[RMDB]
RNA sequence: GGGAACGACUCGAGUAGAGUCGAAAACAAAGAAGUCCCCUCCUCUGACCUCCUGCAGGGCUCCGUCUUGGCCUGGAUCCGCAGGGGGGCCUGGGUAGGAGGGAGGCUGUGGUCUUGGGAUGGGGUGGGUAGUAGCCUAGUUCGCUAGGCUACUACCAAAAGAAACAACAACAACAAC
Reactivity to DMS in 0.01 (KOAc 150mM, MgCl2 10mM, bicine 150mM(pH8.5), 24C), signal-to-noise 1, nucleotides 027 to 126: c090a120a030a120g000a230a070g000u000c000c010c000c000u000c000c000u000c010u010g000a090c010c000u000c000c010u020g020c040a160g000g010g010c150u000c000c070g010u000c060u020u000g020g000c100c040u030g010g000a050u010c110c000g020c000a020g000g000g020g000g000g060c120c150u030g010g030g010u060a000g020g030a020g000g000g000a000g000g000c010u010g020u020g010g000u060c150u000u040g000g000g000a260u000g040g000g020g020u000g010
Reactivity to 2A3 in 0.01 (KOAc 150mM, MgCl2 10mM, bicine 150mM(pH8.5), 24C), signal-to-noise 2, nucleotides 027 to 126: c050a000a180a030g110a000a000g020u010c020c000c000c020u030c010c000u000c020u030g030a020c000c030u020c000c000u030g010c090a270g000g010g010c020u000c000c010g170u100c030u140u200g080g020c000c020u030g030g000a020u000c000c010g000c000a000g000g040g000g030g000g000c010c030u140g040g010g050u190a020g000g040a000g000g000g010a090g000g000c000u010g040u040g040g040u040c030u030u090g030g000g070a130u170g020g010g060g080u060g080
About this RNA:
Chemical mapping of a 177-nucleotide RNA with DMS and 2A3. The DMS profile rests on 1,993 reads. DMS (dimethyl sulfate) methylates the pairing face of unpaired adenines and cytosines. The reactions ran in a buffer of 150 mM KOAc, 10 mM MgCl2 and 150 mM bicine (pH 8.5), at 24 C. For 2A3, 946 sequencing reads were counted. For DMS the reverse transcriptase was MarathonRT. It was measured as part of the RMDB library OK1LIB.